[RMDB]
Conditions: 150 mM KOAc, 10 mM MgCl2 and 150 mM bicine (pH 8.5), 24 C. This 177-nucleotide RNA was probed chemically with DMS and 2A3. For 2A3 the reverse transcriptase was SuperScript II with manganese. The data come from the RNA Mapping Database (RMDB), libraries RFM100 and RFMREP.
RNA sequence: GGGAACGACUCGAGUAGAGUCGAAAAUUCGGACUGACUUUCAUCGUUUGACCGUUCGUGUGAAGUCUCCUGAAACGGAGCGCGAUACAGGGUGACAGCCCCGUAUCACGGACCAGUACGACGUGCGCUAAGAGGGUAGCUUCGGCUACCCUCUUAGAAAAGAAACAACAACAACAAC
Reactivity to DMS in 0.01 (KOAc 150mM, MgCl2 10mM, bicine 150mM(pH8.5), 24C), signal-to-noise 3, nucleotides 027 to 126: u000u000c040g010g000a060c070u010g000a070c120u010u010u000c110a110u000c010g000u000u000u000g010a100c140c300g020u000u000c000g000u000g000u000g000a030a030g000u030c000u030c000c000u000g000a020a300a030c000g000g000a010g010c020g040c030g030a300u010a040c030a230g020g000g050u000g000a050c230a090g000c020c010c010c000g010u000a290u000c000a010c030g000g020a020c020c010a030g010u000a110c300g000a030c060g010u000g020c140g020
Reactivity to 2A3 in 0.01 (KOAc 150mM, MgCl2 10mM, bicine 150mM(pH8.5), 24C), signal-to-noise 2, nucleotides 027 to 126: u100u020c010g070g110a000c000u050g040a030c030u110u120u050c160a070u060c020g020u000u060u140g050a030c050c060g000u010u000c010g000u010g020u020g020a020a000g020u040c020u010c000c010u020g000a040a000a000c020g020g000a000g030c010g000c010g000a000u010a040c050a000g020g000g000u000g030a000c000a020g020c000c000c000c000g010u000a000u020c000a000c040g000g010a000c000c020a000g010u020a020c020g030a010c030g050u070g050c070g000
In probing experiments dimethyl sulfate is read out at A N1 and C N3, which are open when not base-paired.